[RMDB]
RNA sequence: GGGAACGACUCGAGUAGAGUCGAAAACUUCAAAAUGCAGCUUGACUGUGAUUCAUGGCACAAAGCUGGAAUAACCCUGCCAGUUCUUAGAAGCUUUAAGAUUCAUCGUCUUGAACUUGAUACACAUCCACCGUGGAGAAUUCGUUCUCCACGGUGGAAAAGAAACAACAACAACAAC
Reactivity to 2A3 in 0.01 (KOAc 150mM, MgCl2 10mM, bicine 150mM(pH8.5), 24C), signal-to-noise 2, nucleotides 027 to 126: c040u040u050c000a060a040a130a120u160g000c000a000g000c000u010u070g030a120c040u020g020u000g020a000u050u050c090a110u120g060g000c000a000c040a030a140a000g000c000u000g000g000a040a020u110a000a000c020c000c000u000g050c030c030a020g000u030u010c000u100u060a040g000a200a020g000c090u100u080u070a090a000g070a020u030u060c020a000u050c140g030u020c000u010u050g030a080a110c020u050u030g010a050u060a140c050a030c010a100u020

The record gives the reactivity of an RNA of 177 nucleotides to 2A3. Values cover nucleotides 27 to 126. The reactions ran in a buffer of 150 mM KOAc, 10 mM MgCl2 and 150 mM bicine (pH 8.5), at 24 C. For 2A3, 1,065 sequencing reads were counted. The data come from the RNA Mapping Database (RMDB), library RFM100.